Source: RMDB library OK3TST, as collected in RNAgym. This 207-nucleotide RNA was probed chemically with DMS and 2A3. For 2A3, 7,772 sequencing reads were counted. Reactivities are given for positions 27 through 156. The RNA was probed in 150 mM KOAc, 10 mM MgCl2 and 150 mM bicine (pH 8.5) at 24 C.

[RMDB]
RNA sequence: GGGAACGACUCGAGUAGAGUCGAAAACAUGAGUGCGGGGCGAUCAGUCGAGUCAGUCGGGUUGUAGGUGUCGAGUACAUCUCCGGCUGUCAGGUCGAUCCAGGUCAUCGCGCCCCAUCCGGUGUUAGGAUCCACCGCGACACGGAGAUAGGUAGGGUGUUUUACUUUGAUUCGUCAAAGUAAAACAAAAAGAAACAACAACAACAAC
Reactivity to DMS in 0.01 (KOAc 150mM, MgCl2 10mM, bicine 150mM(pH8.5), 24C), signal-to-noise 3, nucleotides 027 to 156: c070a110u000g020a090g030u000g020c050g020g030g030g010c030g000a070u000c030a130g030u000c030g000a150g010u000c010a040g030u000c050g020g010g000u000u000g030u000a020g030g030u000g020u000c040g020a210g040u010a040c030a040u000c010u000c000c010g020g000c000u000g010u000c040a120g010g020u000c040g010a030u010c010c050a160g050g010u000c030a050u000c020g000c050g000c020c010c010c040a080u010c020c020g000g020u000g010u010u000a140g010g010a120u000c070c040a040c020c010g000c010g020a090c030a080c020g000g000a060g010a120u000a040g020g010u000a100g000g010g010
Reactivity to 2A3 in 0.01 (KOAc 150mM, MgCl2 10mM, bicine 150mM(pH8.5), 24C), signal-to-noise 5, nucleotides 027 to 156: c070a080u190g040a040g070u100g020c060g000g020g000g000c020g010a030u040c030a010g050u030c020g020a010g040u020c010a000g010u020c020g020g020g020u120u130g120u210a050g000g040u030g030u060c070g070a070g060u110a020c000a020u010c040u010c010c010g030g000c030u010g010u000c010a020g040g060u020c020g000a010u040c040c070a040g030g070u050c020a040u050c050g000c020g000c050c000c020c010a030u040c020c010g020g000u010g030u060u110a050g020g040a030u000c020c010a020c000c040g040c120g030a020c010a010c040g030g010a030g020a060u100a050g050g080u070a040g020g040g020